An RNA of 177 nucleotides, treated with 2A3 and read out base by base. Reactivities are rounded to 0.1 and cut off at 0 and 3. Reactivities are given for positions 27 through 126. The RNA was probed in 150 mM KOAc, 10 mM MgCl2 and 150 mM bicine (pH 8.5) at 24 C.

[RMDB]
RNA sequence: GGGAACGACUCGAGUAGAGUCGAAAAAGCGGCUACGGCCGCAAGUGGCUCUGGUCCAUUUCCCUGCCAUUCCCUUGGCUUCAAUUUACUCCCAGGGCUGGCAGUGAGAUGGGUUAAGGCUCACAAACCCACUCCGUCUCUUCGGAGACGGAGUGGGAAAAGAAACAACAACAACAAC
Reactivity to 2A3 in 0.01 (KOAc 150mM, MgCl2 10mM, bicine 150mM(pH8.5), 24C), signal-to-noise 1, nucleotides 027 to 126: a010g000c000g010g000c020u070a100c120g240g000c010c000g000c000a000a010g040u050g000g060c080u080c050u100g000g000u020c000c000a000u000u000u000c010c100c000u020g000c000c000a060u130u250c000c000c000u010u000g000g050c000u040u080c070a120a230u010u160u300a020c140u030c000c000c010a000g070g000g000c030u020g050g000c000a000g000u000g000a030g000a010u000g040g000g000u030u000a150a000g000g030c050u080c110a010c050a000a020a030
2A3 adducts were read by reverse transcription with SuperScript II with manganese. The data come from the RNA Mapping Database (RMDB), library RFM100.